Chemical mapping of a 207-nucleotide RNA with 2A3. The 2A3 profile rests on 1,375 reads. For 2A3 the reverse transcriptase was SuperScript II with manganese. The RNA was probed in 150 mM KOAc, 10 mM MgCl2 and 150 mM bicine (pH 8.5) at 24 C.
[RMDB]
RNA sequence: GGGAACGACUCGAGUAGAGUCGAAAACGCUAUGUUUCGACAUAGCGAAAAAUCCUAAGUCUGGUGGAAAGAGACAUGAAGGUGUCGGAAACGACAUACUUCAACAGCUCUUUCGUAACAUCCAGAUAUGGAAAAAAGUGGCUCUUCGGAGCCACAAGUACUCAUCGGAGUUCGCUCCGAUGAGUACAAAAGAAACAACAACAACAAC
Reactivity to 2A3 in 0.01 (KOAc 150mM, MgCl2 10mM, bicine 150mM(pH8.5), 24C), signal-to-noise 2, nucleotides 027 to 156: c000g010c000u000a000u000g000u000u100u000c010g010a000c010a000u000a000g000c000g010a000a000a000a000a000u030c010c000u040a150a010g060u000c010u010g000g050u000g010g030a000a000a020g000a000g240a010c040a090u300g000a000a030g000g000u010g000u000c000g010g060a070a070a020c000g010a000c020a020u070a300c010u000u010c010a010a010c020a030g020c000u000c010u010u010u000c010g000u010a000a020c010a270u070c000c000a000g010a010u050a060u050g040g010a090a190a050a010a020a060g000u000g000g000c000u000c050u030u140c300g150g000a000g000c010c010a000c000a000a000